[RMDB]
RNA sequence: GGGAACGACUCGAGUAGAGUCGAAAAUGAAAAUUUAAACUGGUGGGGCAGUGUCUAGGAUUGACCUUAGACACUGCUUUUUGCCCGUUUCAAACAGGUGAAUACAAACCGUCAUAAAAUAAAAAAACAUUCUCUAAAUGUUCGCAUUUAGAGAAUGAAAAGAAACAACAACAACAAC
Reactivity to DMS in 0.01 (KOAc 150mM, MgCl2 10mM, bicine 150mM(pH8.5), 24C), signal-to-noise 2, nucleotides 027 to 126: u020g000a040a070a110a080u010u000u000a000a020a090c110u000g020g010u000g000g030g000g000c010a010g010u000g010u000c000u000a000g010g000a300u020u010g010a110c270c000u000u000a000g000a020c010a010c000u000g010c000u000u000u000u000u010g000c000c000c050g010u010u000u010c230a040a050a030c100a030g020g000u000g000a060a090u040a220c110a070a100a050c000c010g010u010c040a050u010a050a090a010a070u020a010a010a050a080a100a050a180